[RMDB]
RNA sequence: GGGAACGACUCGAGUAGAGUCGAAAAUCAACGUUCCUGGAAGAACAACAAGGGAAAGUGUACGUUAAUCCACCGUCUGGGAAAACUGUUACCUAUGAGUGCAACUGUAGUGGGCAUAGGAUCGGCAAUCACCACUCAGUUUCGACUGAGUGGUGAUAAAAGAAACAACAACAACAAC
Reactivity to DMS in 0.01 (KOAc 150mM, MgCl2 10mM, bicine 150mM(pH8.5), 24C), signal-to-noise 3, nucleotides 027 to 126: u010c040a110a300c050g010u020u000c010c000u020g000g030a140a050g010a100a040c080a060a080c110a130a080g000g000g040a050a030a090g000u000g020u000a050c100g020u000u000a080a080u010c050c020a090c080c070g010u000c070u030g000g020g000a060a070a070a050c090u000g000u000u000a110c020c020u010a070u000g000a040g020u010g010c020a050a050c100u010g000u000a040g020u000g010g000g020c050a060u000a040g000g010a050u010c040g010g010c130a070
Reactivity to 2A3 in 0.01 (KOAc 150mM, MgCl2 10mM, bicine 150mM(pH8.5), 24C), signal-to-noise 1, nucleotides 027 to 126: u090c010a050a040c050g010u030u020c000c000u020g040g010a080a080g100a140a020c040a020a000c010a050a110g040g010g030a090a080a010g040u040g040u090a060c030g020u060u030a020a060u040c030c020a020c000c030g080u020c040u060g000g030g000a030a050a010a070c050u050g030u160u070a070c000c010u040a050u070g030a050g080u050g000c050a070a030c070u040g000u110a080g000u060g050g070g000c010a020u050a050g030g000a050u030c030g020g030c020a040